Annotation:
The record gives the reactivity of an RNA of 177 nucleotides to 2A3 and DMS. For 2A3, 2,581 sequencing reads were counted. DMS adducts were read by reverse transcription with MarathonRT. Conditions: 150 mM KOAc, 10 mM MgCl2 and 150 mM bicine (pH 8.5), 24 C. The data come from the RNA Mapping Database (RMDB), library OK2TRN.
[RMDB]
RNA sequence: GGGAACGACUCGAGUAGAGUCGAAAAAGAUUGCACCAGGCCACCCUGGCCUGAUUGGGCACCCAGGAAGAGGGUGACUGAGAUUGGACCAGGCCGCCCUGGCCUGAUUGAGCACCUCGGCCAGGCCCCAUAGCGUUGUUUUCGAACAACGCUAUGGAAAAGAAACAACAACAACAAC
Reactivity to 2A3 in 0.01 (KOAc 150mM, MgCl2 10mM, bicine 150mM(pH8.5), 24C), signal-to-noise 2, nucleotides 027 to 126: a000g090a070u160u240g000c020a050c060c010a010g030g000c010c010a070c010c010c020u020g000g000c000c000u000g010a040u020u040g010g020g000c000a020c000c000c010a050g150g110a110a100g120a080g050g020g030u030g010a010c030u040g030a060g030a130u050u150g020g030a110c020c000a000g040g000c050c030g060c020c050c020u010g010g000c000c000u020g010a030u020u100g020a020g020c060a060c040c030u010c020g020g000c010c010a020g030g000c010c000
Reactivity to DMS in 0.01 (KOAc 150mM, MgCl2 10mM, bicine 150mM(pH8.5), 24C), signal-to-noise 3, nucleotides 027 to 126: a090g000a100u000u010g000c060a150c080c010a040g010g010c030c050a100c210c040c050u000g000g000c000c000u000g000a030u000u010g020g000g010c010a050c030c030c010a120g010g020a140a080g020a120g000g000g010u000g010a010c000u000g000a110g000a100u000u000g010g000a040c010c000a030g010g030c180c100g010c180c040c070u000g010g030c000c000u000g010a050u010u000g000a120g020c080a080c050c030u010c040g000g010c010c030a070g010g000c100c080